[RMDB]
RNA sequence: GGGAACGACUCGAGUAGAGUCGAAAAUCUAUGUACUCUUUAAUCCCUGGUGUCCGGAUGAUCAGGUGUAUCUGGAGGAUCGUGAUCAGCGCAAGGAGUACGUGAUGCACGAUACCACGCUCAUCUGACGCGUAAUGAUGUUCGCAUCAUUACGCGUAAAAGAAACAACAACAACAAC
Reactivity to DMS in 0.01 (KOAc 150mM, MgCl2 10mM, bicine 150mM(pH8.5), 24C), signal-to-noise 2, nucleotides 027 to 126: u030c030u020a070u010g000u000a030c020u000c010u000u000u010a180a120u010c030c020c020u000g000g030u010g060u010c000c030g000g000a050u000g000a070u010c020a040g010g030u000g000u030a040u010c060u000g000g020a070g010g020a040u000c030g000u020g010a190u020c060a090g000c020g000c150a130a060g020g010a070g000u000a040c000g020u020g010a080u000g020c050a040c050g030a040u000a110c040c030a190c100g000c040u010c010a010u000c030u000g020
Reactivity to 2A3 in 0.01 (KOAc 150mM, MgCl2 10mM, bicine 150mM(pH8.5), 24C), signal-to-noise 3, nucleotides 027 to 126: u050c010u000a110u150g060u060a050c030u030c060u010u080u090a050a070u100c000c030c000u000g000g090u090g050u010c000c020g070g000a030u070g020a030u120c030a000g010g030u020g000u020a050u020c020u080g020g090a070g010g070a040u040c000g020u010g030a070u040c010a020g060c040g020c090a120a130g090g010a030g110u050a030c020g010u020g000a080u030g010c030a000c040g000a000u030a140c010c000a050c090g080c010u060c030a030u000c030u020g020